[RMDB]
RNA sequence: GGGAACGACUCGAGUAGAGUCGAAAAGAUAUGGAGCAGUCAUAGGAACGAAGAACGCUUUCGGAAACGAAAGCGGGAGUUCUCAUGACUUCCCUCCUAAGUCAAAAGGCAAAGUUCGCUUUGCCAACCAUGCAAAUAGGUUCGCCUAUUUGCAUGGAAAAGAAACAACAACAACAAC
Reactivity to 2A3 in 0.01 (KOAc 150mM, MgCl2 10mM, bicine 150mM(pH8.5), 24C), signal-to-noise 5, nucleotides 027 to 126: g030a010u070a040u170g000g020a020g030c300a000g090u010c000a000u040a130g020g010a000a000c020g080a240a060g030a050a010c000g010c000u010u000u000c020g020g020a070a060a040c010g000a000a000a000g000c020g000g000g000a010g000u010u000c030u000c020a010u010g000a010c020u040u040c030c010c000u020c000c000u030a170a010g070u040c040a040a050a070a150g010g000c010a020a010a000g020u080u180c240g070c160u010u000u000g000c000c000a000a000
Reactivity to DMS in 0.01 (KOAc 150mM, MgCl2 10mM, bicine 150mM(pH8.5), 24C), signal-to-noise 5, nucleotides 027 to 126: g000a050u010a300u010g000g010a010g060c190a000g010u000c000a000u010a050g000g010a000a010c010g020a110a180g000a120a160c010g020c000u000u000u000c010g010g000a070a110a180c000g000a010a010a010g000c000g000g000g010a050g010u010u000c000u000c050a020u000g000a010c010u010u000c110c180c000u000c000c000u000a050a140g000u000c040a060a070a120a120g000g010c010a010a010a020g010u000u010c230g010c000u010u000u000g010c010c000a070a110